[RMDB]
RNA sequence: GGGAACGACUCGAGUAGAGUCGAAAAACACUCACUAGUGAUUAUACGAUUACAGUCUUUGUUACUGUCAACCUUGCAAAAGUUUGCACUUAUGCCAUCUUUGCUUACUCACCACAGCUUACACUUGUCCGAACCUGGUUCGCCAGGUUCAAAAGAAACAACAACAACAAC
Reactivity to 2A3 in 0.01 (KOAc 150mM, MgCl2 10mM, bicine 150mM(pH8.5), 24C), signal-to-noise 9, nucleotides 027 to 129: a000c020a000c010u050c020a060c070u050a030g040u000g070a080u090u110a080u060a110c130g050a050u070u070a020c010a010g010u000c050u080u260u190g110u170u090a030c000u000g010u010c020a050a070c030c040u050u060g020c020a000a010a020a050g030u020u030u040g020c040a040c040u150u080a080u180g020c010c010a020u010c030u010u020u020g010c010u050u050a050c030u030c050a020c020c010a010c020a040g020c010u040u090a030c060a020c070u040u060g040u040c050c050
Reactivity to DMS in 0.01 (KOAc 150mM, MgCl2 10mM, bicine 150mM(pH8.5), 24C), signal-to-noise 7, nucleotides 027 to 129: a060c080a030c000u010c080a040c110u030a040g040u020g000a100u030u050a060u040a070c180g000a130u000u000a060c030a050g000u020c060u040u080u040g000u070u060a010c040u000g000u020c120a020a010c000c000u060u080g010c100a020a020a020a030g030u050u040u000g030c070a070c170u000u000a000u050g020c000c040a060u030c050u010u020u000g010c060u000u000a000c030u020c040a070c030c030a050c080a020g020c080u000u010a030c100a000c080u030u020g020u000c070c070
Source information:
Structure probing data (2A3 and DMS) for a 170-nucleotide construct. It was measured as part of the RMDB library 15KLIB. The 2A3 profile rests on 42,820 reads. The RNA was probed in 150 mM KOAc, 10 mM MgCl2 and 150 mM bicine (pH 8.5) at 24 C.